[RMDB]
Structure probing data (DMS and 2A3) for a 177-nucleotide construct. The 2A3 profile rests on 8,776 reads. For 2A3 the reverse transcriptase was SuperScript II with manganese. As a SHAPE reagent, 2A3 marks flexible, mostly unpaired nucleotides at the ribose 2'-OH. It was measured as part of the RMDB library OK2TST. The reactions ran in a buffer of 150 mM KOAc, 10 mM MgCl2 and 150 mM bicine (pH 8.5), at 24 C.
RNA sequence: GGGAACGACUCGAGUAGAGUCGAAAAGAUGCAAUAUCACUACCCACUGAAAUCCGAUAACAUUUACUCUAACUACGGUGUCUGCCUCUACCGUCCAGACAGUGCCAUGACUAAAUUCGCCGCUCAACUAGUAAAAUAAUUUCGAUUAUUUUACUAGAAAAGAAACAACAACAACAAC
Reactivity to DMS in 0.01 (KOAc 150mM, MgCl2 10mM, bicine 150mM(pH8.5), 24C), signal-to-noise 7, nucleotides 027 to 126: g010a050u000g010c120a120a080u010a040u000c030a080c100u000a130c040c010c020a120c140u000g010a060a080a070u000c040c040g000a090u010a060a060c080a070u000u010u000a060c050u010c040u010a060a060c060u010a050c070g010g010u000g020u000c040u010g000c050c020u000c040u000a050c060c020g000u000c040c040a070g010a080c060a050g010u000g010c040c030a050u000g010a080c060u000a040a060a140u010u000c050g010c050c030g010c080u000c080a060a200
Reactivity to 2A3 in 0.01 (KOAc 150mM, MgCl2 10mM, bicine 150mM(pH8.5), 24C), signal-to-noise 6, nucleotides 027 to 126: g020a010u070g020c070a160a090u060a020u290c020a030c060u100a080c020c000c000a030c050u050g070a080a050a050u040c040c030g080a080u060a180a080c040a090u080u090u150a080c030u030c030u080a100a060c030u050a040c050g010g020u030g040u060c030u030g030c000c000u040c000u040a040c030c030g030u010c010c010a030g010a070c020a030g050u020g070c000c010a040u050g000a020c000u030a050a090a090u080u040c050g020c050c010g050c030u040c030a020a100